Description:
Structure probing data (DMS and 2A3) for a 177-nucleotide construct. The RNA was probed in 150 mM KOAc, 10 mM MgCl2 and 150 mM bicine (pH 8.5) at 24 C. The DMS profile rests on 657 reads. Reactivities are given for positions 27 through 126.

[RMDB]
RNA sequence: GGGAACGACUCGAGUAGAGUCGAAAAGUGCAAGAAGAAGCACAACCAGUAGAAGUACCUGUUGAAGAUAUUGCGCAGGUUGUCAUAGCUGACACCUUACAGGAAACUCCUGUUGUGCCUGAUACUGCCCCAUAGGGAAGUUCGCUUCCCUAUGGGGAAAAGAAACAACAACAACAAC
Reactivity to DMS in 0.01 (KOAc 150mM, MgCl2 10mM, bicine 150mM(pH8.5), 24C), signal-to-noise 1, nucleotides 027 to 126: g000u020g030c080a050a060g000a100a200g020a220a190g000c000a000c010a020a030c060c210a030g000u000a090g000a100a040g010u010a170c000c020u000g000u000u000g010a100a090g010a120u000a040u020u000g000c140g040c190a020g000g000u000u050g020u000c000a040u020a200g010c270u000g030a060c000a020c020c010u000u010a030c000a020g000g000a120a030a020c000u000c010c000u010g020u000u000g010u000g020c030c030u000g000a170u020a100c040u000g020
Reactivity to 2A3 in 0.01 (KOAc 150mM, MgCl2 10mM, bicine 150mM(pH8.5), 24C), signal-to-noise 1, nucleotides 027 to 126: g020u040g040c040a010a020g070a070a010g040a050a020g100c000a000c010a000a000c060c080a010g010u060a020g050a140a020g000u010a020c010c010u010g030u050u080g120a160a020g040a190u090a150u210u240g050c080g000c010a010g000g000u040u030g010u000c020a010u050a120g060c100u040g000a000c000a000c000c000u030u070a010c000a000g000g000a080a100a030c000u000c000c000u000g000u000u010g010u000g000c020c000u000g000a010u050a120c000u030g010